[RMDB]
RNA sequence: GGGAACGACUCGAGUAGAGUCGAAAAGCUGACGGAUAACGUGGUGUUAUAGAUAUAUAUCUUACGUCAUAAUAAUAUGAUAGCUCGCGAAAUAUAUAUAUCGUAGCUAAAUUAUUAUCGUCAGCGACCUAUGAGGAGUAUUCGUACUCCUCAUAGGAAAAGAAACAACAACAACAAC
Reactivity to 2A3 in 0.01 (KOAc 150mM, MgCl2 10mM, bicine 150mM(pH8.5), 24C), signal-to-noise 4, nucleotides 027 to 126: g000c000u000g000a010c000g080g070a130u060a160a030c070g000u020g000g030u030g030u090u110a100u110a170g030a010u050a010u020a020u030a020u220c000u020u030a010c000g010u010c010a000u020a160a020u030a060a010u020a030u010g030a020u010a030g020c050u050c180g030c010g040a020a170a030u210a020u020a010u030a000u040a020u160c000g000u000a000g000c000u000a010a020a020u030u010a020u020u000a020u070c000g000u010c000a000g020c000g020a010
Reactivity to DMS in 0.01 (KOAc 150mM, MgCl2 10mM, bicine 150mM(pH8.5), 24C), signal-to-noise 3, nucleotides 027 to 126: g010c000u010g000a020c000g020g020a070u010a060a040c220g020u000g000g020u020g000u000u010a070u010a070g020a080u000a120u000a080u010a030u000c020u000u000a040c030g010u000c020a040u000a140a070u000a040a070u000a020u000g000a300u000a040g010c050u010c180g040c020g010a040a090a070u000a080u010a110u010a060u010a080u010c010g010u000a030g020c000u000a030a040a060u000u000a050u000u000a040u000c010g020u000c000a010g010c010g000a080
Conditions: 150 mM KOAc, 10 mM MgCl2 and 150 mM bicine (pH 8.5), 24 C. The record gives the reactivity of an RNA of 177 nucleotides to 2A3 and DMS. It was measured as part of the RMDB library OK2TRN. For 2A3, 4,698 sequencing reads were counted. 2A3 adducts were read by reverse transcription with SuperScript II with manganese. Values cover nucleotides 27 to 126. For DMS, 2,724 sequencing reads were counted.